[RMDB]
RNA sequence: GGGAACGACUCGAGUAGAGUCGAAAAACAAGUCCUUUUCCAGUUAAGUGUAUAAUUUGAUAAUCAUGGAGAAGUGCCUCAAUAUUUUGACGAAUGAUAUUAUUAAGUUUUUUACUACCUAAACUUCCGUAUACCAAGUGUUCGCACUUGGUAUACGAAAAGAAACAACAACAACAAC
Reactivity to 2A3 in 0.01 (KOAc 150mM, MgCl2 10mM, bicine 150mM(pH8.5), 24C), signal-to-noise 2, nucleotides 027 to 126: a000c050a030a020g080u070c010c000u020u010u000u000c010c020a060g000u050u070a120a050g040u060g090u120a100u030a170a100u080u070u040g020a020u010a180a040u090c020a060u050g030g010a020g000a000a020g020u040g090c020c010u060c050a000a000u060a080u090u130u040u150g030a010c000g050a130a000u020g020a020u030a010u190u120a050u090u090a110a030g030u010u030u000u000u080u050a040c030u010a060c030c010u030a120a100a100c030u080u030c080
Reactivity to DMS in 0.01 (KOAc 150mM, MgCl2 10mM, bicine 150mM(pH8.5), 24C), signal-to-noise 1, nucleotides 027 to 126: a040c090a110a110g000u000c040c010u000u010u000u010c040c080a020g000u000u030a030a120g000u010g010u030a040u000a040a060u000u000u000g000a040u000a080a040u030c080a080u000g020g000a170g020a020a070g020u000g000c140c120u010c110a030a050u010a050u000u000u000u010g010a180c130g000a060a020u010g000a030u000a020u010u010a090u000u000a020a050g000u000u000u000u010u000u000a100c010u000a080c020c010u000a050a100a080c130u000u010c180